[RMDB]
RNA sequence: GGGAACGACUCGAGUAGAGUCGAAAAGUACUCAGGCAUCCUCGUCGACGAGGAUCCACUAUGAAGCGGUGGGGAGGCUGAAGAUGUACGUUGACGAUGAAGAGUCUGCAGCACUUCAACAGGGAUGGCGGGUAGGUUCGUUCGCGAACUUACCCGCAAAAGAAACAACAACAACAAC
Reactivity to DMS in 0.01 (KOAc 150mM, MgCl2 10mM, bicine 150mM(pH8.5), 24C), signal-to-noise 2, nucleotides 027 to 126: g020u030a100c140u010c030a080g000g000c000a070u000c000c010u020c010g000u000c120g000a070c000g000a080g000g050a030u040c010c050a040c110u010a080u000g010a130a110g010c090g000g050u010g000g010g010g020a060g020g020c030u000g010a060a080g000a070u060g000u000a030c070g000u010u000g020a060c060g000a010u030g000a100a060g000a110g000u020c020u000g080c090a050g000c030a030c020u000u030c000a070a040c040a080g010g000g000a070u000g010
Reactivity to 2A3 in 0.01 (KOAc 150mM, MgCl2 10mM, bicine 150mM(pH8.5), 24C), signal-to-noise 2, nucleotides 027 to 126: g020u040a080c010u010c010a040g000g060c000a080u010c000c000u000c010g030u000c010g080a220c030g000a030g000g000a000u000c000c000a000c010u080a100u090g110a130a000g000c070g000g000u080g010g000g000g000a010g070g040c060u010g010a040a010g080a120u110g000u080a050c020g000u000u030g000a000c020g000a030u060g060a010a040g040a010g000u000c000u000g000c070a010g000c000a030c040u060u050c010a080a010c030a050g000g040g000a030u070g030
Chemical mapping of a 177-nucleotide RNA with DMS and 2A3. 2A3 adducts were read by reverse transcription with SuperScript II with manganese. The reactions ran in a buffer of 150 mM KOAc, 10 mM MgCl2 and 150 mM bicine (pH 8.5), at 24 C. DMS adducts were read by reverse transcription with MarathonRT. For DMS, 3,532 sequencing reads were counted.